[RMDB]
RNA sequence: GGGAACGACUCGAGUAGAGUCGAAAAUUGCUGAGGUGAAGUAAUCUGCAAAGUAAGUUUAGGUUUCAUUAAUACUGAUUGGACUUUGUAUUGGACUCAUGAUGAAUCCCUAAGAGAUCAUCAUGAGGUAUGUUCACAGAUUCGUCUGUGAACAUACAAAAGAAACAACAACAACAAC
Reactivity to DMS in 0.01 (KOAc 150mM, MgCl2 10mM, bicine 150mM(pH8.5), 24C), signal-to-noise 9, nucleotides 027 to 126: u000u000g010c020u000g010a120g010g010u010g010a100a080g020u010a060a060u010c080u000g010c030a030a030a040g010u000a050a050g000u000u000u010a090g010g010u000u000u010c170a120u000u010a060a070u010a080c060u000g000a070u000u010g010g010a050c040u000u000u000g020u010a070u010u010g010g010a300c010u000c000a000u000g010a010u000g000a070a090u000c010c020c090u020a130a110g000a180g000a020u000c000a010u000c000a000u000g000a000g000
Reactivity to 2A3 in 0.01 (KOAc 150mM, MgCl2 10mM, bicine 150mM(pH8.5), 24C), signal-to-noise 4, nucleotides 027 to 126: u090u050g010c020u040g020a060g020g110u080g050a060a030g030u050a040a090u040c020u050g000c020a050a020a030g010u040a050a020g010u030u050u130a040g040g000u010u100u110c080a060u110u240a130a060u090a220c020u030g030a060u050u090g080g010a020c000u040u030u050g030u070a110u050u170g060g030a030c000u000c010a000u000g000a000u000g020a070a130u040c020c010c010u040a120a060g060a000g000a080u010c000a000u000c000a000u010g000a000g000

Notes:
Chemical mapping of a 177-nucleotide RNA with DMS and 2A3. Source: RMDB library OK2TRN, as collected in RNAgym. For 2A3, 8,841 sequencing reads were counted. Values cover nucleotides 27 to 126. The reactions ran in a buffer of 150 mM KOAc, 10 mM MgCl2 and 150 mM bicine (pH 8.5), at 24 C.